[RMDB]
RNA sequence: GGGAACGACUCGAGUAGAGUCGAAAAGCGACAGUGCUGGCCUACAACGGACCCGUAUUUGGUCCAAAUAUGGAUCCUGAUGAAAGCAUAAUGACGAACCUGGAAAAUGGAACACUAAGGGAUGUUAGUGCGUCUCGAAAUUCGUUUCGAGACGCACAAAAGAAACAACAACAACAAC
Reactivity to DMS in 0.01 (KOAc 150mM, MgCl2 10mM, bicine 150mM(pH8.5), 24C), signal-to-noise 1, nucleotides 027 to 126: g000c000g020a140c010a200g000u000g060c000u000g060g000c060c090u000a150c210a040a210c210g000g000a060c000c000c140g000u000a000u000u030u000g000g000u070c160c000a000a090a000u000a000u080g000g000a060u000c000c000u000g000a040u040g040a030a010a080g000c000a000u000a090a000u020g000a260c000g000a060a060c000c050u000g000g040a050a000a110a000u120g000g000a110a020c170a080c180u000a020a150g010g010g010a090u060g000u000u030a060
Reactivity to 2A3 in 0.01 (KOAc 150mM, MgCl2 10mM, bicine 150mM(pH8.5), 24C), signal-to-noise 1, nucleotides 027 to 126: g150c200g000a000c060a020g000u030g030c000u000g000g080c020c000u160a200c040a250a000c000g010g010a000c000c000c010g030u000a060u070u070u090g190g050u000c150c100a010a000a010u010a000u010g070g000a000u000c020c030u100g000a040u060g030a040a120a000g130c150a000u000a190a110u150g000a010c010g060a010a010c000c000u080g000g150a190a190a000a000u200g000g000a000a000c030a000c030u000a000a090g000g000g010a030u120g090u010u000a120